[RMDB]
The data come from the RNA Mapping Database (RMDB), library M2RFOK.
This 207-nucleotide RNA was probed chemically with 2A3 and DMS.
For DMS, 3,163 sequencing reads were counted.
RNA sequence: GGGAACGACUCGAGUAGAGUCGAAAAGAUUUAAACAGAUGGAGAUACACAAAUGUUUGAAUCCCAGUAACAAAAAUCCUGGUAUCUCGGGUAUACAGUAGUGGAGAUACUGUAUUUUUAAUGCUCCUUAGGUUUUCCAUCUUCGGAUGGAAAACAACAAACAGUACUAGUUCGCUAGUACUGUUUGAAAAGAAACAACAACAACAAC
Reactivity to 2A3 in 0.01 (KOAc 150mM, MgCl2 10mM, bicine 150mM(pH8.5), 24C), signal-to-noise 5, nucleotides 027 to 156: g010a000u030u000u020a010a010a000c000a010g050a050u030g010g000a020g010a020u040a020c020a000c010a010a120a060u010g000u000u010u020g020a020a020u020c010c020c020a070g150u200a120a130c110a130a130a020a000a050u050c010c000u010g010g010u010a010u000c010u000c000g000g000g000u010a010u010a000c010a000g010u020a010g040u070g220g030a080g010a090u010a010c000u000g010u000a020u020u060u000u030u140a140a140u110g050c030u090c080c020u070u070a080g050g040u000u000u000u000c000c000a010u000c010u020u060c230g080g000a000u000g000g000a000a000a000a000c000a000a000
Reactivity to DMS in 0.01 (KOAc 150mM, MgCl2 10mM, bicine 150mM(pH8.5), 24C), signal-to-noise 2, nucleotides 027 to 156: g020a080u000u000u010a020a020a020c000a050g020a300u000g000g020a080g010a110u010a030c070a120c090a050a100a260u000g000u000u000u000g000a050a050u000c000c030c020a140g000u000a120a090c110a010a180a050a050a110u000c020c020u000g020g000u000a030u000c000u000c040g020g010g010u000a010u000a020c000a050g020u000a030g030u010g030g020a300g020a190u000a010c000u000g000u000a010u000u020u000u000u020a100a120u020g020c020u000c000c000u000u000a150g010g000u000u000u010u000c000c000a020u000c000u000u000c290g040g000a030u000g000g000a000a000a020a000c010a060a120